[RMDB]
RNA sequence: GGGAACGACUCGAGUAGAGUCGAAAACGCACUCGCAGCUUAAUAACCUGCGCUGAGCCCUUCUCCCCCAGCUUGCCUGUGUCCUCGGGAAUUGGAAGGUCAUCCUUCACAGGAUCGUGUGGAAGUCAUUACUCGUGAGUGUUCGCACUCACGAGAACAUUGGCUUAAUGUUCGCAUUAAGCCAAUGAAAAGAAACAACAACAACAAC
Reactivity to 2A3 in 0.01 (KOAc 150mM, MgCl2 10mM, bicine 150mM(pH8.5), 24C), signal-to-noise 3, nucleotides 027 to 156: c040g000c000a050c010u030c030g020c010a000g000c010u050u010a020a020u020a030a040c000c000u010g040c020g050c210u050g020a030g020c050c000c000u050u050c100u060c010c010c000c000c000a010g000c060u030u100g020c000c000u050g000u010g010u100c030c020u040c030g050g000g040a110a100u090u070g080g010a020a020g030g010u100c040a070u100c020c010u030u070c030a020c000a030g010g010a030u040c040g000u020g020u030g140g010a040a030g020u030c040a090u060u130a120c000u000c000g000u000g000a010g010u010g020u040u090c150g050c060a000c000u000c000a000c000g000a000g000a000a000
Reactivity to DMS in 0.01 (KOAc 150mM, MgCl2 10mM, bicine 150mM(pH8.5), 24C), signal-to-noise 3, nucleotides 027 to 156: c090g000c040a100c060u000c040g020c020a060g000c020u010u000a170a130u000a120a120c300c000u010g010c040g020c120u010g010a100g030c040c020c030u000u000c030u000c010c010c010c020c010a130g000c030u000u000g030c020c010u000g000u000g010u000c020c040u020c060g000g000g020a080a140u010u010g000g000a070a070g030g010u000c070a140u000c020c010u000u000c060a110c080a080g020g000a070u000c090g030u010g030u000g030g010a080a260g020u000c050a090u000u000a160c010u000c000g010u000g000a040g010u010g040u000u010c300g030c020a020c000u000c000a010c000g000a010g020a050a120